[RMDB]
RNA sequence: GGGAACGACUCGAGUAGAGUCGAAAAGAAGUCUGAAAUCAGGGUACAGCAUACUCAAUUUCUGGUGAGGCUGCUCUUCCAGGCUUGUAGACAGCUGCCUUCUUUCUGGGUCCUCACAUGUCCUUUCCUUUGUACAUGUGCACAGAGAGUGAAUGAGUGGUAAUUUGGUUUUCGAACCAAAUUACCAAAAAGAAACAACAACAACAAC
Reactivity to DMS in 0.01 (KOAc 150mM, MgCl2 10mM, bicine 150mM(pH8.5), 24C), signal-to-noise 3, nucleotides 027 to 156: g020a070a100g020u000c020u000g000a030a040a040u000c030a110g000g020g030u000a050c030a200g030c030a300u010a080c010u000c030a090a080u000u010u000c030u000g030g000u000g000a120g020g000c060u010g000c070u010c050u010u010c000c030a260g040g000c110u010u010g000u010a100g010a080c100a110g000c030u000g000c040c020u000u010c010u000u000u000c010u010g030g000g010u000c060c090u010c010a050c020a020u000g000u000c030c060u010u020u010c100c110u010u010u000g030u000a040c000a070u000g010u010g010c130a060c080a100g010a120g030a060g030u000g010a050a130u010g010a120g030
Reactivity to 2A3 in 0.01 (KOAc 150mM, MgCl2 10mM, bicine 150mM(pH8.5), 24C), signal-to-noise 2, nucleotides 027 to 156: g040a010a000g030u050c040u030g050a040a020a060u110c060a070g000g060g010u120a090c040a060g040c000a060u080a220c010u040c060a030a190u070u210u000c030u120g010g010u050g050a020g030g060c040u130g060c000u030c010u110u030c020c000a080g060g000c030u050u060g040u080a040g000a080c090a040g000c020u050g030c020c020u060u040c010u000u050u000c050u030g020g000g030u010c030c030u070c020a000c000a010u020g000u030c000c060u050u030u210c050c030u210u170u040g010u000a000c010a000u020g010u020g010c030a000c020a030g140a000g020a010g080u170g050a070a080u260g010a020g140
Background: The record gives the reactivity of an RNA of 207 nucleotides to DMS and 2A3. In probing experiments dimethyl sulfate is read out at A N1 and C N3, which are open when not base-paired. DMS adducts were read by reverse transcription with MarathonRT. The reactions ran in a buffer of 150 mM KOAc, 10 mM MgCl2 and 150 mM bicine (pH 8.5), at 24 C.